This 207-nucleotide RNA was probed chemically with 2A3. The RNA was probed in 150 mM KOAc, 10 mM MgCl2 and 150 mM bicine (pH 8.5) at 24 C. Source: RMDB library M2RFPK, as collected in RNAgym. Reactivities are given for positions 27 through 156. For 2A3 the reverse transcriptase was SuperScript II with manganese. Values are in units of 0.01, from 0 to 300, in steps of 10.
RNA sequence: GGGAACGACUCGAGUAGAGUCGAAAAACUUUGAUGGCGGUACUAUGAAUUGAUGCAAGGUGUGGAGCGACCUUAAACAGUUCUGGUGGUGCUCUGCAUGGAGUGCUCUACUGAGAUUAUAAAAUAGCAUGCAUAGAGUGCUUCGGCACUCUAUGAACUCGCCUUACGAGUUCGCUCGUAAGGCGAGAAAAGAAACAACAACAACAAC
Reactivity to 2A3 in 0.01 (KOAc 150mM, MgCl2 10mM, bicine 150mM(pH8.5), 24C), signal-to-noise 2, nucleotides 027 to 156: a000c050u040u080u150g060a040u070g000g020c020g000g010u010a090c040u030a050u120g020a050a070u100u030g040a050u080g030c020a020a030g000g000u000g010u040g050g020a030g000c020g050a010c000c010u060u060a130a150a010c020a060g000u060u040c020u030g030g000u010g000g020u000g010c010u020c010u000g050c020a030u050g000g000a000g070u050g000c010u000c040u060a030c020u060g000a000g040a140u070u130a070u170a090a040a090a070u170a070g120c140a080u110g000c000a000u000a000g000a000g000u000g000c000u020u020c080g020g010c000a000c000u000c000u000a000u000g000a000a010